This 177-nucleotide RNA was probed chemically with DMS and 2A3. Source: RMDB libraries RFM100 and RFMREP, as collected in RNAgym. DMS adducts were read by reverse transcription with MarathonRT. The reactions ran in a buffer of 150 mM KOAc, 10 mM MgCl2 and 150 mM bicine (pH 8.5), at 24 C.
RNA sequence: GGGAACGACUCGAGUAGAGUCGAAAAUAUAGCAGGAGAUUGCUAUGUUGCCCGGCAGAGGCUUUGUAUCUGGGCACUAGUCUCAACAGAUGACGACACUUCUGUUCAAUCUCAUAUCCUAUCCAUACUAUUUGAUAUUGUUCGCAAUAUCAAAUAGAAAAGAAACAACAACAACAAC
Reactivity to DMS in 0.01 (KOAc 150mM, MgCl2 10mM, bicine 150mM(pH8.5), 24C), signal-to-noise 9, nucleotides 027 to 126: u010a030u000a030g010c070a080g010g000a110g010a090u020u010g000c010u000a010u010g010u000u000g020c010c010c010g020g020c120a080g010a080g000g010c100u010u010u010g010u020a060u000c020u010g010g010g010c050a070c070u010a050g010u010c090u010c130a080a080c060a030g010a030u000g000a120c110g010a120c200a080c030u000u000c010u000g000u000u010c060a040a050u000c010u000c020a070u020a100u010c060c020u000a050u010c050c070a080u020a220
Reactivity to 2A3 in 0.01 (KOAc 150mM, MgCl2 10mM, bicine 150mM(pH8.5), 24C), signal-to-noise 9, nucleotides 027 to 126: u160a010u030a010g030c030a020g010g160a070g060a120u100u060g010c000u000a010u100g050u070u080g060c000c000c000g000g010c060a060g030a060g110g040c060u220u190u170g050u060a100u060c040u070g010g010g000c010a010c040u040a020g040u030c020u020c090a030a060c020a020g040a040u060g090a070c080g060a020c030a010c070u020u020c000u010g040u040u040c020a030a050u000c010u000c030a050u040a080u130c010c020u040a050u030c030c010a040u050a180